[RMDB]
Chemical mapping of a 207-nucleotide RNA with 2A3. It was measured as part of the RMDB library M2RFPK. The reactions ran in a buffer of 150 mM KOAc, 10 mM MgCl2 and 150 mM bicine (pH 8.5), at 24 C.
RNA sequence: GGGAACGACUCGAGUAGAGUCGAAAACCUGGUUUAGGGUUCCAGGCUAGCCCUAUCUAUCGGUCGAGAUGCGAGCGCUUAAACUCAAAUUGAGUGGCUGAGUUAGUGGUGAACGUAUCCCUAUGUUAAAACGGUAGCUGCUUCGGCAGCUACCGAAGAACCUAUAUAGGUUCGCCUAUAUAGGUUCAAAAGAAACAACAACAACAAC
Reactivity to 2A3 in 0.01 (KOAc 150mM, MgCl2 10mM, bicine 150mM(pH8.5), 24C), signal-to-noise 2, nucleotides 027 to 156: c000c010u000g020g000u050u050u040a090g020g020g020u030u010c020c010a020g040g040c030u030a010g020c020c000c000u010a020u020c040u010a100u060c010g030g010u010c010g030a020g000a170u010g000c010g020a020g000c080g040c190u170u300a110a090a020c020u000c040a030a050a110u050u060g020a030g070u100g010g000c020u010g010a000g020u010u020a060g000u110g120g010u010g000a070a000c030g000u020a070u100c020c030c000u040a100u080g110u050u140a020a080a030a040c000g000g000u000a000g000c000u030g030c000u040u110c300g090g000c000a010g010c000u000a000c000c000g000a000a000